Structure probing data (DMS and 2A3) for a 177-nucleotide construct. The DMS profile rests on 3,875 reads. Values cover nucleotides 27 to 126. 2A3 adducts were read by reverse transcription with SuperScript II with manganese. Conditions: 150 mM KOAc, 10 mM MgCl2 and 150 mM bicine (pH 8.5), 24 C. The data come from the RNA Mapping Database (RMDB), library TTRDEL.
[RMDB]
RNA sequence: GGGAACGACUCGAGUAGAGUCGAAAAGAUAUGGAUUAGCGAGGAUCAUACUGGAUCGGAAACGAUCUUAUGGGAGCUGGGUCCUAAGUCAAAUCGCAAAUAUUUGCUUCGGCAAAUAUUUGCGAAACAGUAGAUUCUUCUUCGGAAGAAUCUACUGAAAAGAAACAACAACAACAAC
Reactivity to DMS in 0.01 (KOAc 150mM, MgCl2 10mM, bicine 150mM(pH8.5), 24C), signal-to-noise 4, nucleotides 027 to 126: g010a050u010a300u010g010g000a010u010u000a040g020c010g000a090g010g020a040u010c010a020u010a020c300u000g000g010a010u000c000g010g000a120a090a210c010g000a020u000c000u000u000a010u000g010g000g010a040g020c010u000g010g010g020u000c000c000u010a050a150g010u000c040a050a080a170u000c000g010c000a010a010a000u000a000u000u000u000g000c000u000u010c240g030g030c000a010a000a010u000a000u000u000u000g000c000g000a010a010a060
Reactivity to 2A3 in 0.01 (KOAc 150mM, MgCl2 10mM, bicine 150mM(pH8.5), 24C), signal-to-noise 2, nucleotides 027 to 126: g040a010u080a030u180g000g000a000u050u060a020g030c040g080a300g080g000a030u040c010a010u040a120c160u230g070g010a000u020c000g020g050a050a070a020c010g000a000u000c000u040u010a020u030g010g010g000a010g000c010u030g030g150g040u020c000c000u010a160a000g090u050c060a030a010a250u020c000g000c000a000a000a010u000a010u010u000u000g020c000u030u060c200g120g000c000a030a000a010u010a010u010u000u010g000c010g000a000a000a000